Conditions: 150 mM KOAc, 10 mM MgCl2 and 150 mM bicine (pH 8.5), 24 C. Structure probing data (DMS and 2A3) for a 177-nucleotide construct. Reactivities are rounded to 0.1 and cut off at 0 and 3. 2A3 adducts were read by reverse transcription with SuperScript II with manganese. It was measured as part of the RMDB library OK2TRN.
RNA sequence: GGGAACGACUCGAGUAGAGUCGAAAACGACUUCUUCCAUCAAUUACCAACACAUGCUUCAGCCUCCGAAUCGGGCGCUAGAUCUCGCGAUUCAAGAUCGAAGAGCAUUGGGAGCAGUAUAUAGUGGCUCCACUUAUACGUUCGCGUAUAAGUGGAGAAAAGAAACAACAACAACAAC
Reactivity to DMS in 0.01 (KOAc 150mM, MgCl2 10mM, bicine 150mM(pH8.5), 24C), signal-to-noise 4, nucleotides 027 to 126: c150g030a080c090u010u020c040u000u000c020c010a070u000c090a080a090u000u000a130c060c040a080a120c130a070c090a050u010g000c010u010u000c040a270g000c050c000u010c040c030g010a050a060u010c100g010g010g020c220g030c090u010a090g000a080u000c020u000c070g020c120g010a090u000u010c090a090a040g010a060u000c000g000a070a060g000a040g000c030a040u000u000g020g000g000a050g020c130a040g020u000a060u010a090u010a090g000u000g010g000
Reactivity to 2A3 in 0.01 (KOAc 150mM, MgCl2 10mM, bicine 150mM(pH8.5), 24C), signal-to-noise 3, nucleotides 027 to 126: c040g040a040c010u050u000c020u070u020c050c030a070u090c030a050a160u190u120a080c000c040a080a060c080a020c020a120u050g010c020u070u080c010a030g010c010c010u010c040c040g050a070a080u080c040g030g080g000c030g010c000u040a030g000a140u050c040u060c080g100c020g060a030u140u130c060a030a000g080a120u020c010g000a010a050g010a040g030c030a040u000u070g050g000g010a020g000c020a010g060u000a050u020a010u040a090g190u130g090g020